This 207-nucleotide RNA was probed chemically with 2A3 and DMS. DMS adducts were read by reverse transcription with MarathonRT. The reactions ran in a buffer of 150 mM KOAc, 10 mM MgCl2 and 150 mM bicine (pH 8.5), at 24 C. Values are in units of 0.01, from 0 to 300, in steps of 10. The data come from the RNA Mapping Database (RMDB), library OK3TST.
[RMDB]
RNA sequence: GGGAACGACUCGAGUAGAGUCGAAAACAAAAUAGGGGAAGAAGAUGUGGGAGACAAAGAUGUGGAGCCUGUCUUCAAUAAAUUUACAGUUAGUUUCAGGGUACAUUGUUUUUCUUCUGCUGUUAAUUAGGUGUAUCCCCAAGACAAUAAAUACAUAAGUAUGGCUAAAUUUCGAUUUAGCCAUACUAAAAGAAACAACAACAACAAC
Reactivity to 2A3 in 0.01 (KOAc 150mM, MgCl2 10mM, bicine 150mM(pH8.5), 24C), signal-to-noise 2, nucleotides 027 to 156: c040a000a130a060a060u210a060g030g010g030g010a040a080g000a080a070g000a080u100g000u060g030g000g000a020g010a030c050a000a060a020g040a040u070g000u050g120g000a070g110c000c000u010g000u010c000u060u050c050a080a140u130a160a140a070u180u130u170a040c060a000g060u100u080a010g030u040u140u120c040a000g000g070g000u050a000c000a030u030u090g070u120u090u000u000u000c000u000u030c020u010g030c000u000g040u200u090a100a050u100u050a140g050g030u050g020u090a060u000c000c000c000c010a000a050g030a000c000a010a010u200a170a170a010u220a080c140a050u190a090
Reactivity to DMS in 0.01 (KOAc 150mM, MgCl2 10mM, bicine 150mM(pH8.5), 24C), signal-to-noise 2, nucleotides 027 to 156: c060a110a090a080a150u000a040g020g010g060g010a070a120g000a090a090g000a070u000g000u010g010g010g010a040g020a140c100a080a080a110g010a110u010g020u000g010g000a160g020c030c030u010g010u010c040u000u010c040a080a090u000a040a060a070u020u000u000a130c130a140g000u010u000a090g010u010u000u000c050a090g020g040g020u000a070c050a040u000u000g000u000u000u000u000u000c020u010u010c060u000g000c010u000g010u010u000a050a110u000u000a100g010g020u000g000u000a080u010c010c000c000c040a070a070g010a090c060a050a100u010a020a030a090u020a080c030a110u000a090